This 177-nucleotide RNA was probed chemically with 2A3 and DMS. For DMS, 1,555 sequencing reads were counted. Source: RMDB library OK1LIB, as collected in RNAgym. DMS adducts were read by reverse transcription with MarathonRT. Values cover nucleotides 27 to 126. The reactions ran in a buffer of 150 mM KOAc, 10 mM MgCl2 and 150 mM bicine (pH 8.5), at 24 C.

RNA sequence: GGGAACGACUCGAGUAGAGUCGAAAAAGAGAAGCGGAACGUCUUGUUAUACAUGGUUUCUUAGAUCCAGUAGUACGUGAAUUACCUAUCGAAGACGUUAAACGUCAAUUGAGAGAAGUAAUUGAACACCGUAAACCGUGUUCGCACGGUUUACGGUAAAAGAAACAACAACAACAAC
Reactivity to 2A3 in 0.01 (KOAc 150mM, MgCl2 10mM, bicine 150mM(pH8.5), 24C), signal-to-noise 3, nucleotides 027 to 126: a000g170a020g000a160a000g070c110g050g130a080a020c040g100u050c000u170u130g080u150u020a190u030a130c100a240u110g030g000u030u000u000c020u090u070a060g000a100u040c010c000a090g010u020a000g030u060a070c030g010u100g070a000a000u040u030a070c000c020u090a090u020c040g020a090a000g040a020c010g020u120u180a050a150a010c010g000u020c000a000a060u100u270g110a200g010a000g020a080a000g020u000a000a000u000u010g030a000a020c020
Reactivity to DMS in 0.01 (KOAc 150mM, MgCl2 10mM, bicine 150mM(pH8.5), 24C), signal-to-noise 2, nucleotides 027 to 126: a070g000a030g000a060a100g010c000g010g000a000a000c050g000u030c030u000u000g050u050u000a170u070a190c210a160u000g030g010u000u000u000c050u020u000a070g000a090u000c050c050a050g000u010a060g010u020a100c170g020u020g000a010a000u000u000a000c020c000u000a300u000c020g010a190a020g000a000c000g020u000u000a040a010a060c020g010u000c000a130a110u000u010g050a300g000a000g000a050a180g000u000a000a000u000u000g000a010a120c090